An RNA of 177 nucleotides, treated with DMS and 2A3 and read out base by base. DMS adducts were read by reverse transcription with MarathonRT. As a SHAPE reagent, 2A3 marks flexible, mostly unpaired nucleotides at the ribose 2'-OH. For DMS, 4,433 sequencing reads were counted.
RNA sequence: GGGAACGACUCGAGUAGAGUCGAAAAGAAAAAGCUUAGGGGUCCGUCUGUUGUACAAAUAAAUCAGUAAGAUGUCAACAGGUAAGAUUGAACAUCCUUUGUCGUCGACGGAUUCUAAGCGAAGAAAGGGUAACUUAAAGUUCGCUUUAAGUUACCCAAAAGAAACAACAACAACAAC
Reactivity to DMS in 0.01 (KOAc 150mM, MgCl2 10mM, bicine 150mM(pH8.5), 24C), signal-to-noise 3, nucleotides 027 to 126: g000a100a150a090a130a190g020c010u000u000a060g010g010g010g000u000c010c000g000u000c000u050g000u000u020g010u020a020c010a000a000a040u020a060a090a070u030c140a110g020u020a070a120g010a010u000g010u000c050a040a030c050a130g020g020u020a060a140g010a300u000u000g030a060a020c020a000u000c020c090u040u020u000g000u010c020g000u010c100g000a040c010g010g020a000u010u040c000u000a000a010g040c030g000a060a090g000a090a100a080
Reactivity to 2A3 in 0.01 (KOAc 150mM, MgCl2 10mM, bicine 150mM(pH8.5), 24C), signal-to-noise 6, nucleotides 027 to 126: g120a000a140a010a010a000g010c000u010u010a020g010g040g120g020u010c010c000g010u010c070u230g120u130u230g070u130a020c030a000a040a060u250a030a090a090u140c030a010g090u090a130a020g010a010u020g000u000c020a010a000c010a040g210g130u160a140a070g100a260u010u030g000a050a010c000a000u010c010c010u030u040u010g030u000c040g000u000c000g010a000c010g000g000a000u000u010c000u000a000a000g000c020g020a020a000g040a040a070a020